[RMDB]
RNA sequence: GGGAACGACUCGAGUAGAGUCGAAAAACCGGCGGUAAAUCAACUCAGUUGAAAGCCGCGAGCGCUAUGGGUGCGAACUCAAAGGACAGCAGAUCCGGUGUAAUUCCGGGGCCGACGGUUAGAGUCCAAAAGAGGUUAUCGUUCGCGAUAACCUCAACAUGACCUUUAGGUUCGCCUAAAGGUCAUGAAAAGAAACAACAACAACAAC
Reactivity to 2A3 in 0.01 (KOAc 150mM, MgCl2 10mM, bicine 150mM(pH8.5), 24C), signal-to-noise 2, nucleotides 027 to 156: a000c000c000g050g000c010g020g010u050a250a110a140u070c020a020a030c040u070c290a210g010u010u020g070a130a090a030g020c030c000g030c000g010a060g010c040g010c030u040a020u220g060g040g020u060g040c010g040a130a040c020u010c050a030a070a090g040g030a050c040a050g000c000a030g070a140u030c000c000g000g010u030g040u040a010a010u140u010c020c010g010g000g000g020c020c010g010a020c010g000g020u010u020a020g030a030g100u010c010c000a040a060a060a090g000a000g000g000u000u000a000u000c000g010u020u060c220g000c020g090a000u000a000a020c000c000u000c000a000a000
Reactivity to DMS in 0.01 (KOAc 150mM, MgCl2 10mM, bicine 150mM(pH8.5), 24C), signal-to-noise 1, nucleotides 027 to 156: a000c000c020g050g020c000g050g050u000a090a140a150u000c030a010a040c020u000c100a170g060u000u000g010a060a120a300g020c020c020g000c070g020a140g020c070g020c010u010a050u000g020g060g000u000g000c250g020a070a050c030u000c020a020a130a070g000g000a070c020a140g010c020a060g020a100u000c020c000g030g020u000g000u020a070a300u000u000c020c020g000g010g000g040c030c000g060a100c020g000g010u000u010a100g020a170g020u030c020c030a050a030a020a150g000a040g020g030u000u000a000u000c000g000u020u000c300g130c000g000a040u000a020a000c000c000u000c000a020a060
An RNA of 207 nucleotides, treated with 2A3 and DMS and read out base by base. The data come from the RNA Mapping Database (RMDB), library M2RFPK. Reactivities are given for positions 27 through 156. For DMS the reverse transcriptase was MarathonRT. The RNA was probed in 150 mM KOAc, 10 mM MgCl2 and 150 mM bicine (pH 8.5) at 24 C. For 2A3 the reverse transcriptase was SuperScript II with manganese. For 2A3, 786 sequencing reads were counted.